The record gives the reactivity of an RNA of 177 nucleotides to DMS and 2A3. 2A3 adducts were read by reverse transcription with SuperScript II with manganese. For 2A3, 1,691 sequencing reads were counted.
RNA sequence: GGGAACGACUCGAGUAGAGUCGAAAACUACAUAAAUUCGUUUAUGUAGCAUCGGGGACGCGCAGACUCCCCGUCAGACCGCUCUAGCCUUCCAAGCUCUGCACUCAACAGCUUUCGAGCUGUUGAAAGGGGAUAGGGAAUUCGUUCCCUAUCCCCUAAAAGAAACAACAACAACAAC
Reactivity to DMS in 0.01 (KOAc 150mM, MgCl2 10mM, bicine 150mM(pH8.5), 24C), signal-to-noise 1, nucleotides 027 to 126: c000u010a000c000a000u000a000a000a020u000u000c200g030u000u000u000a010u010g020u000a010g020c080a050u010c050g040g000g000g030a040c120g000c090g000c100a030g000a120c130u000c000c000c000c000g000u000c150a120g030a090c020c040g010c050u000c060u000a030g000c020c020u000u000c060c030a050a100g030c070u000c010u010g010c090a150c170u000c000a010a000c000a000g000c000u000u000u010c190g000a020g020c000u000g000u000u010g020a010a060
Reactivity to 2A3 in 0.01 (KOAc 150mM, MgCl2 10mM, bicine 150mM(pH8.5), 24C), signal-to-noise 1, nucleotides 027 to 126: c000u010a000c010a000u010a020a010a030u040u050c100g040u060u000u000a010u000g000u000a010g020c030a080u100c030g000g000g020g000a010c050g110c000g000c150a010g020a280c010u030c000c000c000c010g000u020c010a030g010a020c010c010g000c000u050c050u060a050g000c010c040u130u000c040c030a070a020g050c040u050c070u140g020c050a020c050u020c000a020a000c010a000g000c000u080u110u190c180g100a000g000c010u000g000u000u000g000a020a010
Conditions: 150 mM KOAc, 10 mM MgCl2 and 150 mM bicine (pH 8.5), 24 C. For DMS the reverse transcriptase was MarathonRT.